[RMDB]
Background:
Source: RMDB library 15KLIB, as collected in RNAgym. An RNA of 170 nucleotides, treated with 2A3 and DMS and read out base by base. The RNA was probed in 150 mM KOAc, 10 mM MgCl2 and 150 mM bicine (pH 8.5) at 24 C. For DMS the reverse transcriptase was MarathonRT.

RNA sequence: GGGAACGACUCGAGUAGAGUCGAAAAAUCACAGCAAAUGGCGGUAUUUCAUUCUGUCGUAGGCAUAAUUGGAAUUGUGUGGAUUGUGACACUGCAGGUGUGGGGAAUACCUUCAUCUGUGAAGAAGGGGGGAUGGCCUUCGGGCCAUCCAAAAGAAACAACAACAACAAC
Reactivity to 2A3 in 0.01 (KOAc 150mM, MgCl2 10mM, bicine 150mM(pH8.5), 24C), signal-to-noise 2, nucleotides 027 to 129: a020u050c000a000c000a000g060c040a000a000a000u060g040g010c040g000g000u080a100u060u160u030c150a040u010u000c010u020g130u080c010g120u070a180g030g020c050a010u020a110a070u050u160g000g000a080a150u110u100g110u000g020u020g150g010a010u000u010g020u010g000a060c030a040c100u080g000c040a020g000g030u040g000u040g030g000g000g000a000a080u010a150c000c000u000u040c000a010u010c020u000g100u060g040a000a000g120a020a000g000g000g000g050
Reactivity to DMS in 0.01 (KOAc 150mM, MgCl2 10mM, bicine 150mM(pH8.5), 24C), signal-to-noise 3, nucleotides 027 to 129: a070u020c010a070c030a060g030c220a230a140a000u000g000g050c220g070g000u050a020u010u010u010c070a030u030u000c280u080g030u030c040g010u030a070g000g090c020a000u000a060a040u050u060g070g000a160a050u130u040g110u000g020u020g050g020a050u000u030g000u000g030a070c070a130c100u080g020c030a050g000g050u060g040u000g000g060g020g070a120a060u000a120c060c010u000u000c040a010u010c060u060g060u060g000a000a090g000a180a180g000g000g000g000